[RMDB]
Chemical mapping of a 207-nucleotide RNA with DMS and 2A3. For DMS the reverse transcriptase was MarathonRT. The reactions ran in a buffer of 150 mM KOAc, 10 mM MgCl2 and 150 mM bicine (pH 8.5), at 24 C. For 2A3, 2,207 sequencing reads were counted. Source: RMDB library M2RFPK, as collected in RNAgym. Values cover nucleotides 27 to 156. High 2A3 reactivity points to a flexible backbone, as in loops and unpaired stretches.
RNA sequence: GGGAACGACUCGAGUAGAGUCGAAAAGGGAAUGGUGGUUUACCCCGUUCUCAAAUGAUUACCGACCAAUAAUUGGCGAAACUCGUUUCGCGUUGGCUGCCUAAUUCAAGGAAUUAGCGUGCCUUCAAAGACAUCAAGAAGUUCGCUUCUUGAUGAAUCAUACCUUGCACUUCGGUGCAAGGUAUGAAAAAGAAACAACAACAACAAC
Reactivity to DMS in 0.01 (KOAc 150mM, MgCl2 10mM, bicine 150mM(pH8.5), 24C), signal-to-noise 2, nucleotides 027 to 156: g020g030g020a010a020u000g010g000u020g020g010u000u000u000a090c000c010c000c010g040u010u010c000u010c010a050a120a160u000g020a210u010u010a040c000c030g000a030c040c030a090a120u000a120a120u010u000g030g000c000g000a070a060a050c080u010c080g020u000u000u010c010g030c050g010u000u000g000g010c010u000g040c200c010u000a000a010u000u000c020a160a160g010g000a030a000u000u000a020g000c030g010u000g010c030c010u030u000c070a090a090a180g030a250c000a020u000c000a010a010g000a020a020g050u000u000c300g020c040u000u000c000u000u030g000a010u000g010a050a090
Reactivity to 2A3 in 0.01 (KOAc 150mM, MgCl2 10mM, bicine 150mM(pH8.5), 24C), signal-to-noise 4, nucleotides 027 to 156: g010g000g000a030a010u040g020g080u120g050g090u110u170u300a250c040c020c000c010g000u020u010c000u000c000a150a150a010u130g020a030u100u100a080c000c030g030a050c050c040a090a090u240a220a120u160u140g050g010c030g030a010a050a070c050u070c130g090u010u000u010c020g000c010g010u000u020g000g000c020u070g040c020c020u010a010a010u020u010c100a170a100g190g010a060a040u000u000a010g020c040g040u040g000c010c000u010u020c030a090a050a020g100a070c010a000u000c000a000a000g010a000a000g010u050u150c250g050c100u000u000c010u000u000g000a000u010g000a000a020